[RMDB]
RNA sequence: GGGAACGACUCGAGUAGAGUCGAAAAGCGACAUGAUGAAAUUCACUGCCUGCCCGAUGACCCGGACCUGAUGCCAUGCAACGCAUCAUGUUGAUUGGCCCCAGUCAGUGUGGCAAAACCUCGCUGAGAAAAGUCGUUAUUUCGAUAACGACUUUUCAAAAGAAACAACAACAACAAC
Reactivity to 2A3 in 0.01 (KOAc 150mM, MgCl2 10mM, bicine 150mM(pH8.5), 24C), signal-to-noise 2, nucleotides 027 to 126: g000c010g040a010c010a020u050g010a010u010g040a070a090a030u190u100c060a030c100u050g000c020c020u020g010c000c000c000g040a130u120g020a060c030c020c000g020g020a030c020c020u020g030a060u070g040c030c000a040u120g030c040a090a030c070g010c020a040u000c000a000u020g030u020u030g090a170u040u100g060g040c000c010c040c000a020g010u000c010a000g000u000g020u040g040g000c000a020a030a050a100c000c010u010c010g000c000u020g000a020
Reactivity to DMS in 0.01 (KOAc 150mM, MgCl2 10mM, bicine 150mM(pH8.5), 24C), signal-to-noise 4, nucleotides 027 to 126: g020c010g000a030c040a030u010g010a050u000g010a100a100a100u020u000c050a070c090u000g010c030c020u000g010c030c020c020g010a090u010g020a080c070c040c080g000g010a060c050c060u000g000a080u000g010c030c050a070u010g010c200a060a080c250g000c030a010u000c030a020u000g000u010u000g000a150u010u000g010g000c050c020c020c090a120g010u000c020a020g000u010g020u010g020g000c070a060a050a110a300c030c020u000c030g010c020u000g000a180